[RMDB]
RNA sequence: GGGAACGACUCGAGUAGAGUCGAAAAUAAUCAUCAAUGGCCAUCUGCAAAAUCAGGAAUACCACCCCAUUCUAUUAGGUAAACCCAUCCAGUGCAGUACCUUCUAGGGGGGCUAGAUGGUACCACCACGAUACUGUUAGUUCGCUAACAGUAUCGUAAAAGAAACAACAACAACAAC
Reactivity to 2A3 in 0.01 (KOAc 150mM, MgCl2 10mM, bicine 150mM(pH8.5), 24C), signal-to-noise 3, nucleotides 027 to 126: u060a010a030u050c030a020u050c040a000a170u090g030g000c020c010a030u050c020u060g040c040a090a050a070a130u100c040a040g030g040a090a100u060a090c030c010a070c010c000c010c010a020u150u020c020u090a110u070u080a050g000g000u030a030a020a050c020c010c010a020u020c050c030a040g020u030g040c020a010g020u020a020c000c000u050u040c040u080a040g000g000g000g010g040g000c000u010a010g000a030u010g000g000u000a030c010c010a030c030c010
Reactivity to DMS in 0.01 (KOAc 150mM, MgCl2 10mM, bicine 150mM(pH8.5), 24C), signal-to-noise 3, nucleotides 027 to 126: u010a070a040u000c050a060u010c040a110a070u000g010g010c020c040a100u000c020u000g010c100a060a070a120a060u000c090a040g010g010a070a120u000a030c060c020a230c040c000c000c020a070u010u000c080u000a050u000u000a040g010g010u000a020a090a130c050c020c030a060u010c120c100a090g000u000g020c060a080g020u000a030c000c010u010u000c040u000a020g000g010g010g000g000g000c100u000a030g000a030u000g010g000u000a040c040c040a110c110c120

About this RNA:
Source: RMDB library OK2TST, as collected in RNAgym. Chemical mapping of a 177-nucleotide RNA with 2A3 and DMS. The 2A3 profile rests on 4,454 reads. The DMS profile rests on 2,980 reads. Conditions: 150 mM KOAc, 10 mM MgCl2 and 150 mM bicine (pH 8.5), 24 C. DMS adducts were read by reverse transcription with MarathonRT.